[RMDB]
RNA sequence: GGGAACGACUCGAGUAGAGUCGAAAAUACUUCCAGCUUCGGCUGGAAGUAAAAAAGCGUACUACUGGUGGGGGAGAACUUUGUCCCAAAUAGGACAGUGUUCAUCGAUCCGUAACAUCCAGUAUCGCAAAAACAAGCGACGUUCGCGUCGCUUGAAUCUAUCCUGAUCGUUCGCGAUCAGGAUAGAAAAAGAAACAACAACAACAAC
Reactivity to 2A3 in 0.01 (KOAc 150mM, MgCl2 10mM, bicine 150mM(pH8.5), 24C), signal-to-noise 2, nucleotides 027 to 156: u060a000c000u000u000c010c000a010g010c020u040u140c270g180g030c000u000g020g000a010a000g000u000a010a010a010a000a000a000g040c010g010u060a040c020u020a000c010u030g050g000u000g010g010g010g020g000a040g010a000a000c040u130u090u000g020u010c040c000c000a100a180a140u290a070g000g000a020c000a000g000u010g020u070u000c020a110u220c090g040a060u020c010c030g010u060a060a040c000a300u170c120c010a040g000u100a040u180c110g000c010a160a000a090a000a000c000a000a000g100c000g000a020c010g030u110u280c300g020c020g080u020c020g010c000u000u000g000a010a000